[RMDB]
RNA sequence: GGGAACGACUCGAGUAGAGUCGAAAAUACGGGGAACUGAAGCGUUUGGAACUGCAUGACGCAUUGCUGUUUCACUGUGAACACGGUUUGGGACGUCUUUUGUCGGUGGCUUUGCCUCGUCAUCGUGGGAGUCGAAAAGAUUCGUCUUUUCGACUCCAAAAGAAACAACAACAACAAC
Reactivity to DMS in 0.01 (KOAc 150mM, MgCl2 10mM, bicine 150mM(pH8.5), 24C), signal-to-noise 1, nucleotides 027 to 126: u010a040c070g020g040g010g000a040a100c110u000g000a060a030g030c020g000u000u000u000g020g000a010a020c080u020g000c050a180u030g040a030c070g070c100a020u030u040g020c020u010g020u010u000u010c000a040c130u100g000u050g000a050a100c100a080c110g000g000u000u030u010g010g020g000a120c110g010u000c070u030u000u000u000g030u000c000g030g040u020g010g000c020u000u010u010g010c040c030u000c030g010u020c030a020u020c080g040u010g010
Reactivity to 2A3 in 0.01 (KOAc 150mM, MgCl2 10mM, bicine 150mM(pH8.5), 24C), signal-to-noise 4, nucleotides 027 to 126: u130a000c000g020g000g020g000a040a020c060u110g050a110a000g030c010g010u070u150u030g110g020a090a020c050u050g000c030a080u030g020a050c050g040c080a090u040u200g000c020u010g050u060u000u050c160a180c090u030g010u080g080a070a010c060a010c060g070g030u070u080u130g070g030g020a030c010g040u130c080u010u120u050u070g120u090c070g030g010u010g020g000c010u110u080u040g030c000c000u030c020g000u010c010a050u070c050g050u090g040